[RMDB]
RNA sequence: GGGAACGACUCGAGUAGAGUCGAAAACCAUGAGGCAAGGUGUGACUUUUCCUUCUGGAACCUAGCGGCUGGUUCCGAGGGGGGUGUGAUCCACGUACCGCCGCUACAAACUGGGUUACGACCCCUUUAAGGGAUUCAAACCCGGUUCCCCUCCAGAGUUAAUUGUUGCGUUCGCGCAACAAUUAACAAAAGAAACAACAACAACAAC
Reactivity to 2A3 in 0.01 (KOAc 150mM, MgCl2 10mM, bicine 150mM(pH8.5), 24C), signal-to-noise 1, nucleotides 027 to 156: c000c000a040u050g080a050g020g050c080a130a030g030g020u060g060u060g060a080c030u090u080u100u140c010c010u040u000c120u180g000g000a020a000c020c000u020a050g040c020g090g000c060u040g000g010u020u020c020c040g000a090g030g010g000g000g000g000u040g000u040g080a080u030c040c050a050c040g060u050a100c040c040g010c020c010g050c010u060a080c110a030a030a000c010u030g000g000g020u050u020a070c080g030a060c000c000c010c050u020u300u300a190a130g000g000g030a040u120u110c040a040a050a060c000c000c020g000g000u000u000c010c000c000c020u050c000c030a070g070a000